[RMDB]
RNA sequence: GGGAACGACUCGAGUAGAGUCGAAAAGGUCGUGACCCCAAGACCGACUUGGCCGUCCUCAAGGUCGACAACGUCGACAAUCUGACCGUGGCCCGGCUCGGUGAUUCCAGCAAGGUACGGGUCGGUGGCUAGGUGGAUUCUUCGGAAUCCACCUAGCAAAAGAAACAACAACAACAAC
Reactivity to 2A3 in 0.01 (KOAc 150mM, MgCl2 10mM, bicine 150mM(pH8.5), 24C), signal-to-noise 1, nucleotides 027 to 126: g070g030u030c000g050u030g120a210c000c000c000c000a050a040g040a050c000c010g040a030c010u000u110g000g070c120c010g010u050c020c040u020c080a140a000g060g030u030c050g030a030c040a300a040c270g060u010c000g000a030c000a010a100u070c080u070g000a020c000c030g020u120g030g050c000c040c030g070g000c020u030c050g050g000u050g020a100u190u100c010c010a020g050c000a130a050g030g010u050a090c000g010g040g010u040c010g000g010u050g100
Reactivity to DMS in 0.01 (KOAc 150mM, MgCl2 10mM, bicine 150mM(pH8.5), 24C), signal-to-noise 2, nucleotides 027 to 126: g010g010u000c000g020u000g030a210c030c020c010c100a070a140g010a130c050c000g010a110c040u000u000g000g020c020c010g010u000c050c010u000c120a120a120g000g000u000c000g000a040c000a090a180c300g020u020c030g000a030c020a080a080u000c060u000g010a080c040c030g000u000g010g000c020c000c110g010g000c060u000c020g000g000u040g010a140u000u000c010c010a120g020c180a150a050g000g000u060a060c030g010g000g030u000c000g010g030u010g000